[RMDB]
RNA sequence: GGGAACGACUCGAGUAGAGUCGAAAAGGACUCGCCGCCCCAGCCCGAGAUGGGCCACAGCUCCGAACGAAGGGACCGACGGGGAGGAAUCCGCCCCGAGAGGGGUUGCCUGGCAAAGAGGCGAGGAAAGUCGAGAAAAAUUGCCCUAAGAAGGUCCGUAAAGUAAGUAGUUCGCUACUUACUUUACAAAAGAAACAACAACAACAAC
Reactivity to 2A3 in 0.01 (KOAc 150mM, MgCl2 10mM, bicine 150mM(pH8.5), 24C), signal-to-noise 3, nucleotides 027 to 156: g020g010a050c000u010c020g030c010c010g030c000c000c000c010a020g010c010c000c020g100a170g030a130u260g010g020g020c020c010a070c010a020g040c020u030c020c010g050a110a050c070g050a100a060g040g000g010a020c010c020g050a040c030g010g000g020g000a020g020g030a020a100u040c030c030g020c000c000c000c000g050a120g000a020g040g000g000g000u030u020g020c010c030u020g010g000c010a010a080a060g060a050g010g030c020g010a030g000g060a090a140a020g090u160c100g030a020g150a090a090a020a010a010u140u170g040c010c010c000u050a100a040g050a080a020g080g010u020c060c010
Reactivity to DMS in 0.01 (KOAc 150mM, MgCl2 10mM, bicine 150mM(pH8.5), 24C), signal-to-noise 2, nucleotides 027 to 156: g000g000a140c030u000c060g030c050c040g000c020c020c010c000a180g020c010c030c030g000a100g010a180u030g030g000g030c020c040a100c030a090g010c010u000c000c000g000a160a190c090g010a250a190g040g030g000a060c000c010g050a150c050g030g000g000g000a090g010g010a100a130u000c030c050g010c040c000c000c010g000a180g000a270g030g020g030g050u000u000g020c040c030u000g010g010c100a070a110a140g010a120g000g010c000g000a050g040g000a050a080a160g000u010c060g000a240g000a030a080a070a050a090u010u010g000c000c010c040u000a100a160g000a150a130g000g000u010c020c080
Overview
An RNA of 207 nucleotides, treated with 2A3 and DMS and read out base by base. The RNA was probed in 150 mM KOAc, 10 mM MgCl2 and 150 mM bicine (pH 8.5) at 24 C. For DMS, 3,592 sequencing reads were counted. The 2A3 profile rests on 2,661 reads.